Structure probing data (2A3 and DMS) for a 177-nucleotide construct. For 2A3 the reverse transcriptase was SuperScript II with manganese. The data come from the RNA Mapping Database (RMDB), libraries RFM100 and RFMREP. Reactivities are rounded to 0.1 and cut off at 0 and 3.
[RMDB]
RNA sequence: GGGAACGACUCGAGUAGAGUCGAAAAUAUAGCAGUUUUGGCAGUCAACUUCAGCUUGUGCCUGAGCAGACGGGGUUGUGGUGGCCCGCCAGCGGGGGAUGCCAGGCCACCUCCCCCAGCGGCACGCAUAUUCUAACUUCUUCGGAAGUUAGAAUAUAAAAGAAACAACAACAACAAC
Reactivity to 2A3 in 0.01 (KOAc 150mM, MgCl2 10mM, bicine 150mM(pH8.5), 24C), signal-to-noise 9, nucleotides 027 to 126: u300a020u110a030g050c050a040g020u030u050u120u090g050g000c030a020g030u070c030a050a060c080u110u060c050a040g040c040u120u190g020u030g020c010c020u090g080a050g030c040a040g040a110c080g000g000g000g010u150u180g050u070g060g010u010g010g010c000c010c020g020c030c020a030g020c080g030g020g000g000g020a020u080g060c060c010a010g000g010c000c000a000c000c000u020c010c000c000c000c000a010g010c020g010g000c000a000c010g010c000
Reactivity to DMS in 0.01 (KOAc 150mM, MgCl2 10mM, bicine 150mM(pH8.5), 24C), signal-to-noise 9, nucleotides 027 to 126: u030a080u020a080g020c060a050g010u000u010u010u010g000g010c030a070g010u000c060a050a090c080u000u020c060a090g010c060u020u010g020u000g000c020c010u020g020a140g010c070a090g020a130c180g000g010g000g020u030u020g020u010g010g020u000g010g000c000c010c100g030c180c030a040g020c070g010g000g000g010g010a140u010g000c200c040a110g000g000c010c000a020c000c010u000c090c010c000c000c020a060g010c070g000g010c020a030c060g020c170